Structure probing data (2A3 and DMS) for a 207-nucleotide construct. Conditions: 150 mM KOAc, 10 mM MgCl2 and 150 mM bicine (pH 8.5), 24 C. The DMS profile rests on 4,176 reads. Source: RMDB library OK3TST, as collected in RNAgym. DMS adducts were read by reverse transcription with MarathonRT.

RNA sequence: GGGAACGACUCGAGUAGAGUCGAAAAUUAGUUGUUACAUACUUAAUACAAGGGAAAAUUGCAAUGAGGAUGUAUAACCAUAUGGGACAAGGAAUACACCAUGCAACAUCAUCGAUAUUAACAUCUAUUAUGGGAGAUGUUAUUACACACUUCAUCCCGAUAGCAAUUAGUUCGCUAAUUGCUAUCGAAAAGAAACAACAACAACAAC
Reactivity to 2A3 in 0.01 (KOAc 150mM, MgCl2 10mM, bicine 150mM(pH8.5), 24C), signal-to-noise 7, nucleotides 027 to 156: u110u090a030g020u000u040g010u030u010a050c040a060u120a030c050u120u100a090a060u100a150c070a090a080g020g030g000a050a070a080a110u070u040g040c060a050a150u130g020a060g030g020a050u020g030u040a070u020a110a050c020c010a040u060a100u240g060g030g020a020c050a070a040g030g000a030a010u030a040c030a020c010c030a040u080g020c010a030a050c000a050u080c000a010u050c060g060a040u030a030u150u050a020a010c010a010u000c010u040a080u110u070a070u220g060g050g000a030g010a000u010g020u020u000a000u020u060a020c090a000c010a010c030u050u080c040a040u030c050c010
Reactivity to DMS in 0.01 (KOAc 150mM, MgCl2 10mM, bicine 150mM(pH8.5), 24C), signal-to-noise 2, nucleotides 027 to 156: u000u010a060g020u010u000g020u000u010a060c050a060u000a080c000u000u000a070a110u000a030c030a030a040g020g040g010a120a090a240a140u000u000g040c070a050a070u000g020a070g030g000a060u000g050u000a040u000a080a020c000c020a080u000a060u000g010g000g020a080c070a100a070g010g020a150a110u000a080c050a050c000c010a100u000g000c040a050a040c070a040u010c100a080u000c190g010a120u010a030u000u010a020a040c040a020u000c010u010a090u010u000a070u000g030g110g010a040g010a030u000g020u020u000a010u010u000a080c070a100c110a070c080u010u020c030a100u010c020c040